[RMDB]
RNA sequence: GGGAACGACUCGAGUAGAGUCGAAAACCCCUAAAAUCUGCAGUCUGUAUUACAGCUUGUAAUUUAGGGGGCGCUGUUUGUAGGAAGCAUGCUACAGAGUACAGAGAGUAUAUGGAAGCAUAUAAUCAUAGACCACACUUCGGUGUGGUCAAAAGAAACAACAACAACAAC
Reactivity to 2A3 in 0.01 (KOAc 150mM, MgCl2 10mM, bicine 150mM(pH8.5), 24C), signal-to-noise 3, nucleotides 027 to 129: c000c000c000c010u020a030a030a030a130u110c150u100g000c000a000g030u010c020u060g040u070a180u130u240a070c010a000g000c010u090u000g070u070a080a090u010u020u050a000g010g000g000g000g000c020g000c020u010g000u100u100u040g020u020a010g040g060a110a000g050c050a030u150g000c000u000a000c000a000g040a000g160u040a050c070a020g110a000g010a000g080u030a030u000a000u010g050g020a020a000g030c050a040u030a000u030a020a060u050c000a000u040a000
Reactivity to DMS in 0.01 (KOAc 150mM, MgCl2 10mM, bicine 150mM(pH8.5), 24C), signal-to-noise 3, nucleotides 027 to 129: c000c000c000c000u030a000a050a070a060u060c210u050g030c020a030g030u020c030u030g040u030a240u070u060a120c040a000g070c020u080u010g060u050a000a000u000u000u000a060g060g010g000g020g040c150g020c000u010g010u010u060u000g050u030a050g010g020a000a000g030c160a090u050g000c030u010a060c070a040g010a190g020u000a090c060a120g030a110g030a000g020u030a030u000a000u010g000g000a050a070g010c070a060u020a080u010a000a000u040c040a110u060a070